[RMDB]
RNA sequence: GGGAACGACUCGAGUAGAGUCGAAAAGCACAAGACUUCGAACAUUAUAGCAGUUAGUAGUUGCCUAAACCCAUUGCAAUAUAUGGGACAGUAGAGGUCGCAUGCCUAUACUGUGCGGUGAACAUUCAAAAGGGAUGGUACUUCGGUACCAUCCCAAGAAGAUGCAAGAGUUCGCUCUUGCAUCUUCAAAAGAAACAACAACAACAAC
Reactivity to DMS in 0.01 (KOAc 150mM, MgCl2 10mM, bicine 150mM(pH8.5), 24C), signal-to-noise 1, nucleotides 027 to 156: g030c010a080c010a060a150g000a080c020u000u000c060g030a100a240c080a090u000u000a110u010a090g010c000a050g030u000u000a120g020u000a090g000u000u000g030c030c020u010a040a080a110c010c010c000a080u010u010g030c110a120a200u000a140u000a000u000g010g010g010a090c020a010g000u000a030g000a020g040g020u000c100g020c160a070u000g000c010c010u000a100u000a010c050u020g000u000g010c070g080g050u010g010a030a040c020a110u020u010c050a050a080a190a250g050g020g000a000u000g000g010u010a000c010u000u010c300g000g020u000a030c000c000a030u000c000c000c000a000a010
Reactivity to 2A3 in 0.01 (KOAc 150mM, MgCl2 10mM, bicine 150mM(pH8.5), 24C), signal-to-noise 1, nucleotides 027 to 156: g050c000a010c020a100a010g090a140c070u120u080c110g070a150a010c070a100u120u300a180u220a100g000c100a020g000u010u090a030g040u140a010g040u020u070g050c010c050u130a180a090a010c000c000c000a000u000u000g000c040a000a000u040a000u030a000u100g010g000g000a000c010a000g010u060a020g000a000g040g050u130c090g030c080a010u300g050c000c010u040a020u030a020c010u000g020u020g140c070g000g020u020g070a050a080c020a060u130u210c130a250a070a030a140g000g000g000a000u000g000g000u050a000c010u000u060c100g000g030u000a000c000c000a020u000c000c000c000a030a000